[RMDB]
RNA sequence: GGGAACGACUCGAGUAGAGUCGAAAAGCGCCAUAACUGCACGAUCAACUGAUGCGUACCGACACGCAUACAUGCCGAUACACUGAUAUAUCAACGCCGUAGUCGCAACUGUACGCACACAACCAACAUAUCGCGUGUAUGGCAUCAAUUAUGGUUGCCCGUCCAGCGAAUUCGUUCGCUGGACGGGAAAAGAAACAACAACAACAAC
Reactivity to 2A3 in 0.01 (KOAc 150mM, MgCl2 10mM, bicine 150mM(pH8.5), 24C), signal-to-noise 2, nucleotides 027 to 156: g020c000g000c000c000a030u010a010a050c030u010g010c100a000c080g050a130u050c060a080a090c100u050g090a060u000g000c010g050u060a030c020c040g080a020c060a030c080g000c000a000u090a140c100a000u040g060c030c090g050a010u000a020c030a030c080u230g040a040u110a000u000a000u210c010a050a000c100g020c050c010g090u100a090g100u070c060g010c100a040a110c050u030g000u080a000c010g050c000a000c010a000c000a000a170c130c030a070a110c030a100u090a010u040c010g030c030g160u000g000u000a000u010g000g000c060a000u030c030a030a040u050u030a030u000g050g000u060u140g070